Source: RMDB library TTRDES, as collected in RNAgym. This 177-nucleotide RNA was probed chemically with DMS and 2A3. For DMS the reverse transcriptase was MarathonRT.
RNA sequence: GGGAACGACUCGAGUAGAGUCGAAAAGAUAUGGAAUCGGGUGGACAUGAUCACUCUCGGAAACGAGAGAAUGAUCAACAGCCAUUCCGAUUCCUAAGUCAAACCAGUUUGGUUCGCCAAACUGGAACUAAUCAUGGGGGUUCGCCCCCAUGAUUAGAAAAGAAACAACAACAACAAC
Reactivity to DMS in 0.01 (KOAc 150mM, MgCl2 10mM, bicine 150mM(pH8.5), 24C), signal-to-noise 3, nucleotides 027 to 126: g010a040u000a170u000g000g020a010a000u000c010g000g000g050u010g010g010a050c180a240u020g000a010u000c000a070c000u000c000u000c000g030g000a050a070a090c000g000a000g000a020g000a090a050u010g010a020u000c010a060a090c240a240g010c000c000a030u000u010c010c000g000a010u000u000c000c000u000a000a110g010u000c010a160a100a220c010c000a020g030u010u000u010g000g010u000u020c300g040c000c000a000a000a010c000u000g000g000a020a140
Reactivity to 2A3 in 0.01 (KOAc 150mM, MgCl2 10mM, bicine 150mM(pH8.5), 24C), signal-to-noise 3, nucleotides 027 to 126: g010a010u050a020u070g000g000a000a000u010c020g030g010g020u000g000g060a120c130a300u300g010a030u020c010a010c030u000c000u000c000g030g000a030a040a030c000g000a010g030a010g010a050a200u120g000a000u000c000a040a080c140a070g020c000c010a030u300u120c010c000g000a000u000u000c000c010u000a020a010g010u020c010a000a080a100c010c000a000g000u000u010u000g090g000u050u130c300g050c130c000a000a010a000c000u000g000g000a030a050